The record gives the reactivity of an RNA of 177 nucleotides to DMS and 2A3.
For 2A3, 978 sequencing reads were counted.
For DMS, 2,550 sequencing reads were counted.
Source: RMDB library M2PK90, as collected in RNAgym.

RNA sequence: GGGAACGACUCGAGUAGAGUCGAAAAGUAAAGGCGGAGGAGGGUUUUGGCUUGCGCUCGGUCCGCCCGCGCGUGGUGUGGGCUGGAAUUCGUGUGUGGAGGAUGAUUAAUGCCGCGGGCCCAGGAAAGUACUCUUCUACUUCGGUAGAAGAGUACUAAAAGAAACAACAACAACAAC
Reactivity to DMS in 0.01 (KOAc 150mM, MgCl2 10mM, bicine 150mM(pH8.5), 24C), signal-to-noise 2, nucleotides 027 to 126: g010u010a080a090a090g010g020c100g010g010a080g000g020a120g000g000g020u000u010u000u000g010g020c050u010u000g010c050g010c030u010c030g010g020u000c030c020g000c020c000c010g030c060g020c080g020u000g040g020u010g030u000g000g010g030c020u000g020g000a050a090u000u000c040g030u000g020u010g000u000g000g000a100g020g010a090u000g000a100u000u000a040a090u010g000c070c030g000c030g000g000g000c030c000c050a100g000g010a040a070
Reactivity to 2A3 in 0.01 (KOAc 150mM, MgCl2 10mM, bicine 150mM(pH8.5), 24C), signal-to-noise 1, nucleotides 027 to 126: g020u050a000a040a160g080g000c090g000g030a040g050g070a060g020g050g060u030u050u150u120g080g020c010u050u060g010c030g050c040u010c000g030g030u020c000c030g000c040c000c000g010c020g020c010g110u170g100g000u090g000u030g030g050g000c120u230g050g070a040a060u220u170c070g000u030g000u000g000u030g050g020a040g020g020a010u060g010a010u070u180a150a050u120g040c010c000g040c050g000g060g000c040c010c000a000g050g050a070a090